[RMDB]
RNA sequence: GGGAACGACUCGAGUAGAGUCGAAAAGCUAUUUCGAUAGCGCAGUCACCUUUGUGAGUCACAGCCAUUGUCAGAGCUCAGUACAGCCCAUUGGGCUGGAACCGCUCUUGGAUUUAUGGUCACAGCUCACUCUGGUCAGAUAGGUCUUCGGACCUAAAAAUUUAUCAUGAUUCGUCAUGAUAAAUUUAAAAGAAACAACAACAACAAC
Reactivity to 2A3 in 0.01 (KOAc 150mM, MgCl2 10mM, bicine 150mM(pH8.5), 24C), signal-to-noise 5, nucleotides 027 to 156: g000c000u010a010u050u230u180c200g110a020u020a000g010c030g000c060a030g150u170c050a020c010c000u000u030u010g010u010g010a040g080u150c020a020c040a040g010c000c000a010u020u020g000u010c000a000g000a010g010c000u000c000a000g000u000a000c020a010g000c000c050c090a300u190u300g020g000g000c000u010g010g000a010a000c000c000g000c000u000c000u010u030g030g000a010u120u290u280a020u010g020g020u090c010a020c020a030g000c000u000c000a000c000u010c000u000g020g010u030c000a000g050a210u120a040g000g020u000c020u030u070c280g130g010a000c000c000u030a060a070
Reactivity to DMS in 0.01 (KOAc 150mM, MgCl2 10mM, bicine 150mM(pH8.5), 24C), signal-to-noise 3, nucleotides 027 to 156: g000c010u000a000u010u000u000c180g020a060u000a040g020c000g020c130a170g000u010c060a070c010c010u020u000u020g010u000g000a050g000u000c060a180c200a200g010c020c010a040u000u000g000u000c010a040g000a070g010c010u000c030a110g010u000a180c000a020g000c000c010c010a300u000u000g060g040g050c000u000g030g020a110a100c220c300g000c010u000c000u010u010g020g000a020u000u010u000a010u020g030g010u000c070a190c180a200g000c000u000c000a010c010u010c040u000g010g030u000c050a130g000a190u010a010g020g000u000c010u000u000c210g080g010a020c000c010u000a000a050
Conditions: 150 mM KOAc, 10 mM MgCl2 and 150 mM bicine (pH 8.5), 24 C. An RNA of 207 nucleotides, treated with 2A3 and DMS and read out base by base. As a SHAPE reagent, 2A3 marks flexible, mostly unpaired nucleotides at the ribose 2'-OH. 2A3 adducts were read by reverse transcription with SuperScript II with manganese. The DMS profile rests on 6,925 reads.